RNA sequence: GGGAACGACUCGAGUAGAGUCGAAAAGAUAUGGAAGACAUAUGUGUGGUGUGUGCAGCGUUGAUCGUACUGCAUCGGAAACGAUGUUACGGGAGCUGUACACACCACACAUAUGUCUUCCUAAGUCCUUGUCUCCAAUGUUCGCAUUGGAGACAAGAAAAGAAACAACAACAACAAC
Reactivity to DMS in 0.01 (KOAc 150mM, MgCl2 10mM, bicine 150mM(pH8.5), 24C), signal-to-noise 2, nucleotides 027 to 126: g000a120u010a300u000g000g000a010a000g000a000c000a000u010a000u000g050u000g040u000g010g040u000g010u020g020u010g010c020a000g010c000g000u010u010g000a050u010c010g010u000a020c300u040g000c010a000u000c000g000g010a170a100a250c010g020a030u010g010u000u000a000c000g000g000g010a030g030c000u000g030u000a000c000a020c010a000c000c000a000c000a000c000a000u000a000u000g000u000c000u000u000c000c000u000a010a060g000u010c040